Chemical mapping of a 207-nucleotide RNA with DMS and 2A3. It was measured as part of the RMDB library OK3TST.
[RMDB]
RNA sequence: GGGAACGACUCGAGUAGAGUCGAAAAGAUAUUAGAAGGGCUUUGUGUAUACGAAGAAUUUACGAAGCAAGUAAAUUGCAUGAAAGGAUGCAAGUAGCGUGCAUGUUGGAAUUGAAAAAAGCUAAUUAAGUCAGUAAUUGCACCUAUAUCUAGCUCAGUAGUAAUUUACGUUCGCGUAAAUUACUACAAAAGAAACAACAACAACAAC
Reactivity to DMS in 0.01 (KOAc 150mM, MgCl2 10mM, bicine 150mM(pH8.5), 24C), signal-to-noise 4, nucleotides 027 to 156: g010a140u000a050u000u000a130g030a130a110g020g020g000c030u000u000u000g030u010g010u010a070u000a090c060g010a120a120g010a060a040u010u000u010a100c040g010a090a150g010c070a050a100g010u000a050a070a110u000u000g020c010a050u000g000a090a100a130g020g000a120u000g010c030a020a060g020u000a130g030c080g050u000g000c020a130u000g010u000u000g020g000a070a130u000u000g010a010a060a080a080a030a050g010c020u010a030a080u000u000a050a110g010u000c020a070g030u000a050a100u000u000g010c070a020c010c030u000a050u000a050u010c060u000a070g020c020u000c040a180
Reactivity to 2A3 in 0.01 (KOAc 150mM, MgCl2 10mM, bicine 150mM(pH8.5), 24C), signal-to-noise 5, nucleotides 027 to 156: g000a010u100a030u160u230a040g050a080a040g030g010g000c000u020u050u050g060u030g010u040a030u020a130c080g030a060a070g040a120a080u070u070u020a050c070g030a050a030g020c020a000a010g000u020a010a080a090u020u040g010c010a020u090g080a090a050a040g080g030a010u060g010c020a000a040g000u020a000g050c030g040u010g000c030a040u040g020u040u040g060g070a100a080u040u080g060a080a040a010a000a010a020g010c020u010a030a050u100u020a060a030g040u020c050a000g020u070a150a080u100u020g000c010a010c000c000u050a060u010a010u140c060u020a000g020c010u010c060a000
Conditions: 150 mM KOAc, 10 mM MgCl2 and 150 mM bicine (pH 8.5), 24 C.